[RMDB]
RNA sequence: GGGAACGACUCGAGUAGAGUCGAAAAACAAGUUCUUAAGGCUUUGCAGAAGGCUGUUAAUAUAGCUAAAAACGCCUAUGAGAAGGAUAAGGCAGUGGCCCGUAAGUUAGAACGUAUGGCUGAUCAGCUCUCUAAAGGAGUUCGCUCCUUUAGAGAGAAAAGAAACAACAACAACAAC
Reactivity to DMS in 0.01 (KOAc 150mM, MgCl2 10mM, bicine 150mM(pH8.5), 24C), signal-to-noise 3, nucleotides 027 to 126: a070c070a080a110g010u000u000c000u010u010a110a070g000g010c010u000u000u000g030c110a090g010a110a150g000g000c020u000g010u010u000a090a110u010a080u010a010g000c030u010a020a030a050a150a030c140g010c010c000u000a080u010g010a080g000a110a050g010g000a080u000a040a190g000g000c010a080g000u000g010g020c000c000c040g050u000a070a080g020u000u000a030g000a020a040c060g000u000a030u000g010g000c030u000g000a110u010c110a070g000
Reactivity to 2A3 in 0.01 (KOAc 150mM, MgCl2 10mM, bicine 150mM(pH8.5), 24C), signal-to-noise 1, nucleotides 027 to 126: a030c060a050a040g060u050u000c000u030u040a040a060g010g040c010u020u120u150g000c050a030g010a190a020g080g000c010u010g000u010u010a100a050u130a050u080a130g000c010u080a090a140a050a050a090c080g000c010c000u020a110u150g090a110g040a060a010g080g000a030u040a100a010g040g000c030a030g030u060g060g000c000c000c070g070u080a060a000g020u020u120a010g000a050a030c000g030u070a110u130g040g010c010u010g010a040u060c010a010g060